Source: RMDB library OK2TRN, as collected in RNAgym. Chemical mapping of a 177-nucleotide RNA with DMS and 2A3. DMS (dimethyl sulfate) methylates the pairing face of unpaired adenines and cytosines. The DMS profile rests on 2,961 reads.

[RMDB]
RNA sequence: GGGAACGACUCGAGUAGAGUCGAAAACACUAUUCUAACUGGAAGUCGACACAACUGUUUUCAGCUUCAAUCUGGAGUCCAGCCUAACCUUUAGACCAACUUCAGGUGAGUCCUAGGCCAAGGUGUACUGGUCAUAAUCUUUCGAGAUUAUGACCAGAAAAGAAACAACAACAACAAC
Reactivity to DMS in 0.01 (KOAc 150mM, MgCl2 10mM, bicine 150mM(pH8.5), 24C), signal-to-noise 4, nucleotides 027 to 126: c080a070c100u010a100u000u010c060u010a150a100c110u000g010g010a060a060g020u010c090g010a120c160a090c120a100a070c100u010g000u010u000u000u000c050a050g000c050u000u000c130a070a110u020c030u000g000g000a050g020u000c030c100a100g000c000c010u010a050a100c080c070u000u000u010a050g010a060c030c110a050a070c040u000u010c070a050g010g010u000g010a160g010u010c030c030u010a060g010g010c050c050a050a060g010g020u020g020u010a160
Reactivity to 2A3 in 0.01 (KOAc 150mM, MgCl2 10mM, bicine 150mM(pH8.5), 24C), signal-to-noise 2, nucleotides 027 to 126: c030a000c000u140a100u170u050c050u080a150a240c040u060g030g060a040a040g070u080c030g090a020c010a010c000a210a160c070u080g030u040u050u020u070c010a030g000c020u100u070c040a080a150u040c040u040g070g000a030g000u000c030c010a020g010c010c020u030a050a070c020c000u040u120u090a030g040a030c010c010a030a090c040u080u090c060a020g000g060u020g070a040g020u000c020c010u040a030g020g000c030c020a040a010g060g000u050g020u040a090
The RNA was probed in 150 mM KOAc, 10 mM MgCl2 and 150 mM bicine (pH 8.5) at 24 C.